The data come from the RNA Mapping Database (RMDB), library M2RFPK. An RNA of 207 nucleotides, treated with 2A3 and read out base by base. The reactions ran in a buffer of 150 mM KOAc, 10 mM MgCl2 and 150 mM bicine (pH 8.5), at 24 C. For 2A3 the reverse transcriptase was SuperScript II with manganese. For 2A3, 1,096 sequencing reads were counted. Values are in units of 0.01, from 0 to 300, in steps of 10.
[RMDB]
RNA sequence: GGGAACGACUCGAGUAGAGUCGAAAACCAGCAGCCAGGACCUACCAGGCUGCGGUGCGGCUCGCCGCACAGGUCAUCCCUCAUCGGGCGCGUCCUGCGUCCUUCCACGCCAACCCACAAGGGAUCUAAAACACGUUGGGCUUCGGCCCAACGUGAAGGUAAUUUAUAGGUUCGCCUAUAAAUUACCAAAAGAAACAACAACAACAAC
Reactivity to 2A3 in 0.01 (KOAc 150mM, MgCl2 10mM, bicine 150mM(pH8.5), 24C), signal-to-noise 2, nucleotides 027 to 156: c020c000a010g000c000a000g000c000c010a040g000g100a160c080c010u140a260c140c050a020g000g040c000u010g000c020g000g000u010g000c030g030g040c040u050c200g070c010c000g040c010a010c010a000g060g000u020c020a050u040c010c030c020u090c040a140u160c050g010g000g000c010g000c030g040u270c090c080u190g000c010g000u020c010c000u050u060c020c010a060c060g030c000c060a050a070c080c010c000a070c050a100a070g020g020g010a010u010c040u150a060a080a050a010c010a000c000g010u000u010g000g010g000c020u000u050c090g080g000c000c000c010a000a010c000g000u010g010a010a010